An RNA of 177 nucleotides, treated with DMS and 2A3 and read out base by base. DMS adducts were read by reverse transcription with MarathonRT. Conditions: 150 mM KOAc, 10 mM MgCl2 and 150 mM bicine (pH 8.5), 24 C. Values cover nucleotides 27 to 126. The 2A3 profile rests on 25,936 reads.
RNA sequence: GGGAACGACUCGAGUAGAGUCGAAAAAUAUUACGAUUAGCAUGCCGUAGCCGUAUAGCUAAUAUGCAUCGAUUAUAAUCGGCGCAUGCCGUAAUAUAUCGGCGCGCCGGCAUCGAUAUAUGCGCGCCACCUAGCUUUAUUUCGAUAAAGCUAGGUGAAAAGAAACAACAACAACAAC
Reactivity to DMS in 0.01 (KOAc 150mM, MgCl2 10mM, bicine 150mM(pH8.5), 24C), signal-to-noise 9, nucleotides 027 to 126: a060u000a040u010u000a050c040g010a160u000u000a070g010c020a090u000g000c020c090g020u000a120g020c070c070g010u000a060u000a080g010c020u000a030a040u000a050u000g010c050a040u000c020g010a020u000u010a110u000a100a100u000c010g010g020c050g010c010a050u010g030c100c010g010u000a030a070u010a080u000a070u000c050g020g010c010g010c010g010c020c090g010g000c150a020u000c060g000a050u000a080u000a060u000g010c030g010c100g020c090
Reactivity to 2A3 in 0.01 (KOAc 150mM, MgCl2 10mM, bicine 150mM(pH8.5), 24C), signal-to-noise 9, nucleotides 027 to 126: a000u130a040u090u080a030c040g020a030u040u060a010g010c010a010u030g020c030c050g190u100a040g020c040c020g030u050a050u040a060g010c010u030a050a040u080a130u220g020c020a020u020c030g030a010u050u120a100u190a250a090u060c000g000g000c020g000c030a040u110g010c010c000g010u010a110a020u130a030u010a040u180c030g000g000c000g000c000g010c020c000g010g010c010a020u070c010g020a000u020a010u010a000u170g030c040g000c020g020c030